[RMDB]
RNA sequence: GGGAACGACUCGAGUAGAGUCGAAAAUGUCCAGGGUGAAGGUAGGGUAACACCUACUGGAGGCCCGAACCCACGCACGUUGAAAAGUGCGGGGAUGAGGUGUGGGUAGCGGAGAAAUUCCAAUCGACCUAUAGCUUAACUUCGGUUAAGCUAUAGGAAAAGAAACAACAACAACAAC
Reactivity to DMS in 0.01 (KOAc 150mM, MgCl2 10mM, bicine 150mM(pH8.5), 24C), signal-to-noise 9, nucleotides 027 to 126: u010g010u010c040c060a200g000g010g020u000g010a300a140g000g010u000a010g000g000g010u000a140a160c190a220c010c000u000a010c000u000g000g010a300g010g000c010c000c010g010a090a060c020c020c010a130c020g020c000a010c010g000u010u000g010a100a090a110a170g000u000g000c010g010g000g000g000a060u010g010a090g000g000u000g010u010g010g000g010u000a100g010c110g000g010a110g000a050a050a130u000u000c040c050a060a080u000c130g010a290
Reactivity to 2A3 in 0.01 (KOAc 150mM, MgCl2 10mM, bicine 150mM(pH8.5), 24C), signal-to-noise 3, nucleotides 027 to 126: u150g030u030c020c020a060g020g000g000u090g030a030a010g000g000u010a000g030g000g000u010a020a000c020a020c020c000u000a000c000u000g000g010a030g110g090c000c000c000g010a020a010c010c000c010a110c010g020c000a010c010g090u170u220g160a160a130a060a050g010u020g000c010g000g000g010g000a020u090g050a040g000g090u230g020u200g080g010g020u060a030g040c040g070g040a050g050a110a120a060u150u050c040c010a020a090u080c060g060a070
This 177-nucleotide RNA was probed chemically with DMS and 2A3. 2A3 adducts were read by reverse transcription with SuperScript II with manganese.